[RMDB]
RNA sequence: GGGAACGACUCGAGUAGAGUCGAAAACACUUGUUAACUAGAUCACCUAGUUACCAGCAGAAAAAGUGGAGGGGGGGGCAGAUUGUUGAAGGCUUUGAAAUCUUCCACUCAACAUCAUUGCCAAGAACAGUUUGUAUAAAUUCGUUUAUACAAACUGAAAAGAAACAACAACAACAAC
Reactivity to 2A3 in 0.01 (KOAc 150mM, MgCl2 10mM, bicine 150mM(pH8.5), 24C), signal-to-noise 2, nucleotides 027 to 126: c020a010c010u050u080g040u080u060a010a020c010u010a020g030a140u140c060a040c090c000u000a000g000u000u000a010c020c020a000g040c040a020g170a060a160a030a020a010g060u070g020g080a100g050g000g000g010g010g020g000g000c010a000g020a110u090u070g010u010u010g020a030a020g050g000c040u100u070u110g040a060a060a020u020c010u050u030c010c010a030c020u060c020a020a030c010a020u030c010a020u030u100g030c000c020a030a020g030a100a010
Reactivity to DMS in 0.01 (KOAc 150mM, MgCl2 10mM, bicine 150mM(pH8.5), 24C), signal-to-noise 6, nucleotides 027 to 126: c080a090c070u000u010g010u000u010a010a020c000u000a010g010a300u010c210a160c300c000u000a010g000u000u010a050c060c030a070g020c150a120g010a080a070a110a100a080g010u010g010g020a080g000g010g010g010g020g010g010g010c100a030g010a070u000u000g010u000u000g010a050a080g010g010c170u000u010u010g000a040a090a070u010c080u000u000c020c050a070c080u000c050a040a050c080a050u010c030a070u000u010g020c030c030a070a140g000a070a150
Structure probing data (2A3 and DMS) for a 177-nucleotide construct. Conditions: 150 mM KOAc, 10 mM MgCl2 and 150 mM bicine (pH 8.5), 24 C. For DMS, 5,775 sequencing reads were counted. 2A3 adducts were read by reverse transcription with SuperScript II with manganese. The data come from the RNA Mapping Database (RMDB), library OK2TRN.